[RMDB]
RNA sequence: GGGAACGACUCGAGUAGAGUCGAAAACCCAAGACAAUCUUCGGGUUGGGUUGGGAAGUAUCAUGGCUAAUCACCAUGAUGCAAUCGGGUUGAACACUUAAUUGGGUUAAAACGGUGGGGGACGAUCCCGUAACAUCCGUCCUAACGGCGACAGACUCUGUAUUUAGUUCUUCGGAACUAAAUACAGAAAAGAAACAACAACAACAAC
Reactivity to 2A3 in 0.01 (KOAc 150mM, MgCl2 10mM, bicine 150mM(pH8.5), 24C), signal-to-noise 2, nucleotides 027 to 156: c000c000c000a000a010g070a030c050a010a160u120c060u230u080c120g090g030g070u150u110g080g020g050u230u170g010g010g020a060a030g000u020a000u000c000a000u010g010g010c010u000a000a010u030c030a000c010c000a000u000g000a000u000g000c000a020a040u090c050g000g010g010u040u010g060a080a010c010a020c060u040u160a030a040u240u140g020g020g020u080u070a040a100a000a060c000g040g000u040g020g050g020g000g000a030c030g000a030u080c000c050c000g000u010a000a000c010a110u000c010c020g010u000c000c000u010a080a030c060g020g000c030g000a010c010a030g060a040c030u000
The record gives the reactivity of an RNA of 207 nucleotides to 2A3. The data come from the RNA Mapping Database (RMDB), library PDB130. The reactions ran in a buffer of 150 mM KOAc, 10 mM MgCl2 and 150 mM bicine (pH 8.5), at 24 C. For 2A3 the reverse transcriptase was SuperScript II with manganese.